[RMDB]
Conditions: 150 mM KOAc, 10 mM MgCl2 and 150 mM bicine (pH 8.5), 24 C. An RNA of 177 nucleotides, treated with DMS and 2A3 and read out base by base. 2A3 adducts were read by reverse transcription with SuperScript II with manganese. For 2A3, 1,417 sequencing reads were counted. It was measured as part of the RMDB library OK1LIB. DMS adducts were read by reverse transcription with MarathonRT.

RNA sequence: GGGAACGACUCGAGUAGAGUCGAAAAGAAAGUCGACAGGUUUACCAUAUGAACUAAGCCAAAGGGGCAAUGUCUUAUUAAUUGAACCAACAAGACCUCUGGCUGAAAAUGUGCACAGACAGUUGCAUAUCGAAGGAUCUUUCGAGAUCCUUCGAUAAAAAGAAACAACAACAACAAC
Reactivity to DMS in 0.01 (KOAc 150mM, MgCl2 10mM, bicine 150mM(pH8.5), 24C), signal-to-noise 5, nucleotides 027 to 126: g010a080a090a060g020u010c010g010a060c070a070g020g000u000u010u020a120c130c100a120u020a090u010g010a050a080c100u010a090a070g010c000c010a060a060a100g010g010g000g030c070a030a040u000g000u010c040u020u040a080u010u020a110a070u050u010g000a090a150c120c080a050a050c130a060a090g000a110c010c010u010c020u010g010g000c010u000g000a080a030a050a040u010g000u000g020c070a050c060a110g010a060c120a070g010u010u000g000c060a140
Reactivity to 2A3 in 0.01 (KOAc 150mM, MgCl2 10mM, bicine 150mM(pH8.5), 24C), signal-to-noise 3, nucleotides 027 to 126: g080a000a070a010g000u030c000g020a000c030a050g040g090u050u010u050a170c020c010a080u090a110u220g110a000a000c040u020a030a030g000c000c020a130a050a030g090g010g030g000c040a090a130u040g040u040c030u060u160a120u120u130a130a160u060u140g150a020a040c020c010a010a090c030a120a050g060a140c000c000u010c010u010g000g020c040u010g000a000a030a000a000u150g030u060g000c030a040c010a040g210a060c060a050g130u170u010g050c000a000